Chemical mapping of a 207-nucleotide RNA with 2A3 and DMS. The 2A3 profile rests on 1,687 reads. In probing experiments dimethyl sulfate is read out at A N1 and C N3, which are open when not base-paired.

RNA sequence: GGGAACGACUCGAGUAGAGUCGAAAAAGCACUGGUACGAUACGUCGUACCAGUGCAGUCGUUGGGAUGGAACGCAAUUCAAUACAUGUGUGACGUGUAUUUGCGAACGACGUAAUUAUUUUUCAAAAUCACGCUAUCGUGUUCGCACGAUAGCGAACGUAAUCACUAGCUUCGGCUAGUGAUUACGAAAAGAAACAACAACAACAAC
Reactivity to 2A3 in 0.01 (KOAc 150mM, MgCl2 10mM, bicine 150mM(pH8.5), 24C), signal-to-noise 3, nucleotides 027 to 156: a000g000c010a000c000u000g000g000u000a000c000g000a010u010a060c260g090u000c010g010u000a000c000c000a020g000u010g000c010a000g000u010c020g000u010u040g110g010g020a110u160g070g050a060a030c030g000c030a030a070u180u120c030a050a030u010a010c000a010u030g090u040g180u230g290a110c020g010u020g010u000a010u000u050u050g010c010g020a000a010c010g040a010c030g050u010a060a050u180u090a060u050u160u030u030u060c120a100a120a040a080u130c070a070c070g000c000u000a000u010c000g000u010g040u140u040c200g030c040a000c000g000a000u000a000g000c000g020a000a000
Reactivity to DMS in 0.01 (KOAc 150mM, MgCl2 10mM, bicine 150mM(pH8.5), 24C), signal-to-noise 1, nucleotides 027 to 156: a170g050c000a030c010u030g000g030u110a000c020g010a070u010a090c290g080u010c010g090u000a000c000c000a020g000u030g010c000a000g010u000c030g040u000u010g010g000g050a150u010g000g000a160a170c030g010c110a110a160u010u010c070a020a040u010a000c010a030u000g000u010g020u030g000a060c120g020u020g000u000a010u000u000u000g000c000g000a040a070c030g020a050c000g010u000a050a060u000u010a110u000u000u000u000u010c020a060a020a040a120u000c120a230c040g010c000u000a020u010c020g040u000g010u000u000c300g000c020a010c030g050a040u000a010g020c010g020a000a020